[RMDB]
RNA sequence: GGGAACGACUCGAGUAGAGUCGAAAAGAUGGGUCCGAUGGAUUAAUGCGUCGCCCGCCAUUGGAUCCUGAUUGAUAGAUUGAGGGCGACGGUCGGAUCACUCGGUAAUUCGGUGCUCUACGAGUGAUCCGUGAUGAUAGUUAAGAAGAGCACCUAAAUUAUAUAUGCGUUUCGACGCAUAUAUAAUAAAAGAAACAACAACAACAAC
Reactivity to DMS in 0.01 (KOAc 150mM, MgCl2 10mM, bicine 150mM(pH8.5), 24C), signal-to-noise 1, nucleotides 027 to 156: g010a130u000g030g060g020u000c030c030g030a060u000g000g000a070u010u000a080a110u000g040c030g010u000c030g000c020c000c050g050c010c010a030u000u000g010g020a020u000c000c000u000g000a110u000u000g000a170u010a120g020a290u010u000g000a180g020g010g020c040g040a020c020g010g080u010c000g010g020a010u000c010a020c070u000c010g090g010u010a060a110u000u010c120g000g020u000g050c050u010c000u000a090c000g000a060g000u010g010a000u010c010c010g040u000g010a100u000g010a160u000a090g020u010u000a100a100g000a140a090g010a060g030c030a010c010c010u000a000a070
Reactivity to 2A3 in 0.01 (KOAc 150mM, MgCl2 10mM, bicine 150mM(pH8.5), 24C), signal-to-noise 4, nucleotides 027 to 156: g060a030u110g000g000g000u010c000c020g000a000u000g000g020a040u100u250a270a080u300g110c000g010u000c000g000c000c000c000g000c010c000a010u000u000g000g000a010u000c010c000u040g060a090u050u170g050a040u050a210g140a100u050u290g090a090g000g000g000c000g000a000c010g000g000u020c010g000g000a000u000c000a000c000u000c000g030g050u110a090a110u200u180c060g010g000u010g010c000u000c010u010a000c000g010a000g000u000g000a010u000c000c000g000u020g020a010u060g000a010u070a170g170u270u120a110a010g060a030a010g000a030g000c000a000c000c000u000a000a000

Chemical mapping of a 207-nucleotide RNA with DMS and 2A3. For DMS the reverse transcriptase was MarathonRT. Reactivities are given for positions 27 through 156. For 2A3, 3,020 sequencing reads were counted. Source: RMDB library OK3TST, as collected in RNAgym. High DMS reactivity at an A or C suggests that its Watson-Crick edge is free. For 2A3 the reverse transcriptase was SuperScript II with manganese.